Source: RMDB library OK2TRN, as collected in RNAgym. Chemical mapping of a 177-nucleotide RNA with 2A3 and DMS. The 2A3 profile rests on 3,758 reads. Reactivities are given for positions 27 through 126. The reactions ran in a buffer of 150 mM KOAc, 10 mM MgCl2 and 150 mM bicine (pH 8.5), at 24 C. For 2A3 the reverse transcriptase was SuperScript II with manganese.
RNA sequence: GGGAACGACUCGAGUAGAGUCGAAAACAAAAUGGAACAGCGUGCGAACAGCAGUUCAGUUCCUUCCGGGGAGCGUUCUGUACGCAGGUUGCGCACAUAGUCUUCUGCACCGAGGGCGAUACCGAUCCGACGAUCAUAAGUUCGCUUAUGAUCGUCGAAAAGAAACAACAACAACAAC
Reactivity to 2A3 in 0.01 (KOAc 150mM, MgCl2 10mM, bicine 150mM(pH8.5), 24C), signal-to-noise 2, nucleotides 027 to 126: c030a000a050a030a050u140g000g050a020a010c010a030g020c050g160u040g000c020g010a090a030c050a070g000c000a000g030u040u050c020a070g010u010u000c000c000u030u000c090c190g070g010g000g000a010g000c010g010u000u010c000u000g030u030a020c040g000c040a020g050g090u020u030g050c050g000c040a050c020a070u090a060g030u010c020u030u010c020u080g060c040a070c040c080g000a030g020g030g010c020g010a020u100a120c000c030g010a030u060c030
Reactivity to DMS in 0.01 (KOAc 150mM, MgCl2 10mM, bicine 150mM(pH8.5), 24C), signal-to-noise 2, nucleotides 027 to 126: c050a040a070a090a080u000g000g000a160a090c020a020g040c030g020u000g000c010g000a130a110c150a150g000c080a050g010u000u000c040a090g030u000u000c000c020u000u010c150c160g000g000g010g010a030g020c000g010u000u010c000u000g010u000a070c040g020c030a050g010g020u000u000g020c030g000c090a210c080a060u000a090g000u000c010u000u000c030u010g000c060a060c050c060g000a050g010g000g000c030g010a070u010a050c040c010g010a150u010c110